Record summary: This 177-nucleotide RNA was probed chemically with DMS and 2A3. Conditions: 150 mM KOAc, 10 mM MgCl2 and 150 mM bicine (pH 8.5), 24 C. Reactivities are given for positions 27 through 126. 2A3 adducts were read by reverse transcription with SuperScript II with manganese.

[RMDB]
RNA sequence: GGGAACGACUCGAGUAGAGUCGAAAAAUACUGUUGAAUGUCGCUCGUUAAACGGUUUAGAUACGUGUUUCGACGUUACUGCGGCACGCGUAUCGGUGGUGUCUAGAACCGGUGCCACUGCCGCCUAUCAUGUCUAGCGCUUCGGUGCUAGGCAUGAAAAAGAAACAACAACAACAAC
Reactivity to DMS in 0.01 (KOAc 150mM, MgCl2 10mM, bicine 150mM(pH8.5), 24C), signal-to-noise 8, nucleotides 027 to 126: a090u040a050c090u000g010u000u010g000a080a040u020g000u000c050g010c080u010c020g000u020u020a060a070a050c040g010g000u000u020u020a100g000a070u030a020c040g010u000g000u010u000u010c030g010a060c030g010u010u020a070c140u020g000c010g000g010c020a020c110g000c270g000u000a010u000c010g000g020u000g000g020u020g010u030c170u020a110g020a140a030c030c020g000g010u000g000c010c030a300c290u000g010c010c010g010c020c110u020a070
Reactivity to 2A3 in 0.01 (KOAc 150mM, MgCl2 10mM, bicine 150mM(pH8.5), 24C), signal-to-noise 7, nucleotides 027 to 126: a000u180a040c060u040g040u070u070g060a120a070u110g010u030c020g010c040u020c020g040u040u110a050a090a020c020g020g060u060u140u150a070g020a090u160a060c020g020u040g060u040u090u100c040g020a050c030g020u070u060a070c050u080g000c000g000g000c000a010c040g010c020g010u030a010u030c020g000g010u020g020g060u110g080u090c100u110a070g040a110a020c010c000g000g020u000g000c000c000a030c020u010g000c000c000g000c000c000u070a110